Chemical mapping of a 177-nucleotide RNA with DMS and 2A3. The data come from the RNA Mapping Database (RMDB), library OK2TRN.
RNA sequence: GGGAACGACUCGAGUAGAGUCGAAAAUGGCGCUGGCCUGUGGUACGGGGUGGUGCGCGAACGUAACAUCGGCGCGCUCAAGCCGCAGAUUCGUACCUAGUGUGACUGCGGCGGUCCGGCAUAGCGAGUACCGGAGUUAAUUCGUUAACUCCGGUACAAAAGAAACAACAACAACAAC
Reactivity to DMS in 0.01 (KOAc 150mM, MgCl2 10mM, bicine 150mM(pH8.5), 24C), signal-to-noise 4, nucleotides 027 to 126: u010g000g000c020g020c020u010g020g020c030c010u010g030u000g020g020u000a050c040g010g000g000g020u000g000g010u000g020c020g010c020g010a100a070c080g010u010a100a090c190a080u000c100g000g010c010g010c010g020c010u000c130a090a170g010c000c000g000c010a020g000a110u000u000c020g010u000a030c020c130u000a110g020u000g010u000g000a040c010u010g000c020g010g010c000g010g000u000c040c030g000g000c050a080u000a040g010c070g010a200
Reactivity to 2A3 in 0.01 (KOAc 150mM, MgCl2 10mM, bicine 150mM(pH8.5), 24C), signal-to-noise 2, nucleotides 027 to 126: u130g050g000c040g010c020u020g060g050c020c010u070g030u050g020g030u080a050c030g010g000g000g070u120g030g050u060g020c080g000c020g030a140a050c020g020u070a120a040c040a100u150c020g030g000c000g020c000g000c000u020c050a030a020g000c000c000g000c000a000g050a210u060u060c020g010u020a020c000c060u030a080g030u020g040u030g130a000c030u000g000c000g000g010c000g010g010u010c010c000g010g000c030a050u100a040g060c030g060a020